Structure probing data (2A3 and DMS) for a 177-nucleotide construct. Conditions: 150 mM KOAc, 10 mM MgCl2 and 150 mM bicine (pH 8.5), 24 C. The 2A3 profile rests on 2,840 reads. It was measured as part of the RMDB library OK1LIB.
RNA sequence: GGGAACGACUCGAGUAGAGUCGAAAACGUCGUGAACUAGCGACAAUGCCGUAGAUCUAUCGUUAUCUAACCGAAACAUCGUGACUAGUCGUAGAAUAGAACCAGGAGAGGGCGCUGUCAAACAAAGACGAGGUCUCAGAUUCGUCUGAGGCCUCGUAAAAGAAACAACAACAACAAC
Reactivity to 2A3 in 0.01 (KOAc 150mM, MgCl2 10mM, bicine 150mM(pH8.5), 24C), signal-to-noise 3, nucleotides 027 to 126: c030g000u020c000g000u040g060a080a060c090u080a100g030c000g010a010c000a020a010u100g020c020c000g050u030a020g000a140u000c020u060a070u100c070g070u100u040a020u050c040u060a070a120c040c000g030a050a020a020c050a090u050c030g040u050g000a070c030u060a010g020u040c020g070u040a020g010a090a000u030a030g030a020a010c060c030a000g010g030a010g020a010g030g020g000c010g000c010u000g010u080c040a040a040a070c040a040a110a000g100
Reactivity to DMS in 0.01 (KOAc 150mM, MgCl2 10mM, bicine 150mM(pH8.5), 24C), signal-to-noise 3, nucleotides 027 to 126: c160g010u000c020g010u020g000a090a140c090u000a080g030c020g010a040c020a080a050u020g000c030c030g020u030a040g000a070u020c040u010a110u000c070g010u020u010a070u010c050u020a030a140c110c030g000a110a060a110c150a080u010c040g010u000g050a100c060u000a050g000u000c010g050u010a040g000a120a050u010a100g020a080a080c080c040a010g000g010a110g000a020g040g000g000c050g000c030u000g000u000c030a050a030a080c110a050a110a060g000